An RNA of 177 nucleotides, treated with 2A3 and DMS and read out base by base. It was measured as part of the RMDB library RFMREP.

[RMDB]
RNA sequence: GGGAACGACUCGAGUAGAGUCGAAAAGGCGAAUCCAUUGGCUGCCGAGCCGCCCGGUUACCGCCGGGUGGGGAGGGCGCCGAAAAGAGGAGCCGAAAACGUAUUAUAAGCUUCGGCUUAUAAUACGGUAUCAGGCUUAGUUCGCUAAGCCUGAUACAAAAGAAACAACAACAACAAC
Reactivity to 2A3 in 0.01 (KOAc 150mM, MgCl2 10mM, bicine 150mM(pH8.5), 24C), signal-to-noise 3, nucleotides 027 to 126: g000g000c010g000a010a030u020c020c010a040u060u070g040g010c130u220g050c050c010g020a030g060c000c000g000c010c000c010g040g020u090u210a190c040c070g010c000c010g000g010g000u010g000g000g010g010a070g150g010g050c000g000c000c000g010a010a030a000a010g030a000g000g010a000g000c010c010g010a000a000a000a010c000g000u000a000u010u000a000u000a000a000g000c000u010u130c280g090g000c000u010u020a000u000a010a000u000a000c010g000
Reactivity to DMS in 0.01 (KOAc 150mM, MgCl2 10mM, bicine 150mM(pH8.5), 24C), signal-to-noise 4, nucleotides 027 to 126: g010g000c010g000a300a150u000c010c020a290u000u010g010g030c000u010g050c000c000g020a300g010c000c000g000c000c000c000g030g000u000u000a120c300c300g000c000c000g000g000g000u010g020g020g000g000a150g010g000g030c020g000c010c000g020a020a030a080a130g000a050g000g000a300g010c000c010g000a030a020a110a240c000g020u000a000u000u000a010u000a020a000g010c000u020u030c260g010g010c000u000u010a000u010a000a000u000a000c010g000